[RMDB]
This 177-nucleotide RNA was probed chemically with DMS. Source: RMDB library M2PK90, as collected in RNAgym. The reactions ran in a buffer of 150 mM KOAc, 10 mM MgCl2 and 150 mM bicine (pH 8.5), at 24 C.

RNA sequence: GGGAACGACUCGAGUAGAGUCGAAAACACAACUGCGAAGGGGGGACGGAGAAGGCUAUGUUGGCCGGGCGACGGUUGUCCCGGUUUAAGCGUGUUGGCUGGUUUUCCAGGCAAAUCCGGAAUUGAAUGACUUUACCACAUUCGUGUGGUAAAGUCAAAAAGAAACAACAACAACAAC
Reactivity to DMS in 0.01 (KOAc 150mM, MgCl2 10mM, bicine 150mM(pH8.5), 24C), signal-to-noise 1, nucleotides 027 to 126: c070a090c120a010a120c090u010g020c050g010a050a060g020g000g020g030g000g000a060c060g010g010a040g020a060a100g030g010c040u020a080u000g020u020u000g010g000c010c010g000g040g000c300g000a060c160g030g030u010u000g000u020c010c010c020g000g020u000u000u000a050a110g020c060g000u010g010u010u000g000g000c010u000g000g010u010u000u040u000c000c020a060g000g000c030a010a030a060u000c040c020g000g000a100a050u000u000g020a110a190